[RMDB]
The record gives the reactivity of an RNA of 170 nucleotides to 2A3 and DMS. For DMS the reverse transcriptase was MarathonRT. For DMS, 12,662 sequencing reads were counted. For 2A3 the reverse transcriptase was SuperScript II with manganese.
RNA sequence: GGGAACGACUCGAGUAGAGUCGAAAACAACUGUUAUCUUGCUACUGCAUUGUUAACACUCCAACAAAUAGAGUUGAAGUUUAAUCCACCUGCUCUACAAAGGGCUGGUGAAGCUGCUAACUUUUGUAUGCCAUUCCCUUCGGGGAAUGGAAAAGAAACAACAACAACAAC
Reactivity to 2A3 in 0.01 (KOAc 150mM, MgCl2 10mM, bicine 150mM(pH8.5), 24C), signal-to-noise 8, nucleotides 027 to 129: c020a010a010c030u030g000u020u020a040u080c040u040u130g020c000u030a130c060u080g020c030a040u050u050g010u050u050a040a030c030a020c090u010c040c010a030a010c000a040a230a090u260a070g130a000g040u000u000g020a040a020g010u030u090u160a050a050u100c010c000a020c010c010u050g020c010u010c000u050a140c110a080a260a120g000g010g000c000u010g000g000u000g000a010a010g000c020u040g000c020u030a000a020c000u050u020u020u050g030u040a060u230g060
Reactivity to DMS in 0.01 (KOAc 150mM, MgCl2 10mM, bicine 150mM(pH8.5), 24C), signal-to-noise 4, nucleotides 027 to 129: c080a080a140c160u050g020u040u010a050u070c030u070u000g030c050u110a110c140u070g020c100a000u040u040g010u020u050a060a050c110a060c040u030c090c020a040a090c070a040a090a160u000a090g030a100g040u000u000g040a110a030g030u000u000u000a100a050u000c000c020a040c030c030u020g030c040u040c000u010a080c300a050a110a030g000g020g090c060u000g050g040u040g030a020a050g010c060u000g000c130u030a000a000c000u000u030u020u060g040u000a090u000g030